[RMDB]
RNA sequence: GGGAACGACUCGAGUAGAGUCGAAAAGUGUUACCCCACGGGAACUGCUGAGUGCCCCUGACGUCCAGACCCUCCCCCGUCCGGGAGAAUGGAGAUUCGGGAACGUGAAGCAUGGUGGGGACGAAGCGAACUUCCAUCUUCGGAUGGAAGAAAAGAAACAACAACAACAAC
Reactivity to DMS in 0.01 (KOAc 150mM, MgCl2 10mM, bicine 150mM(pH8.5), 24C), signal-to-noise 9, nucleotides 027 to 129: g010u000g020u020u020a160c010c020c000c030a040c020g020g030g050a070a060c180u000g000c030u010g000a260g010u020g010c090c040c000c000u000g030a050c300g050u000c000c000a020g010a140c300c070c000u010c010c000c010c090c180g060u070c140c250g020g020g010a000g010a050a070u020g020g010a060g000a100u020u000c100g000g000g000a140a090c030g030u030g030a150a050g010c030a010u020g040g010u000g010g000g030g020a050c030g000a060a030g010c050g000a100a120
Reactivity to 2A3 in 0.01 (KOAc 150mM, MgCl2 10mM, bicine 150mM(pH8.5), 24C), signal-to-noise 9, nucleotides 027 to 129: g050u050g100u060u150a150c000c000c000c000a000c000g100g050g070a090a080c050u030g010c000u020g020a010g050u070g060c020c000c000c010u040g020a020c020g230u010c010c000a010g020a050c020c000c000u000c010c000c000c010c060g260u110c050c030g000g010g000a020g000a040a010u020g000g000a030g000a030u070u070c030g000g010g020a050a040c020g060u080g100a040a000g010c000a030u110g080g000u010g000g010g000g000a000c040g040a030a000g040c020g020a020a010
This 170-nucleotide RNA was probed chemically with DMS and 2A3. Conditions: 150 mM KOAc, 10 mM MgCl2 and 150 mM bicine (pH 8.5), 24 C. For 2A3, 28,732 sequencing reads were counted. For DMS the reverse transcriptase was MarathonRT. It was measured as part of the RMDB library 15KLIB. The DMS profile rests on 69,249 reads.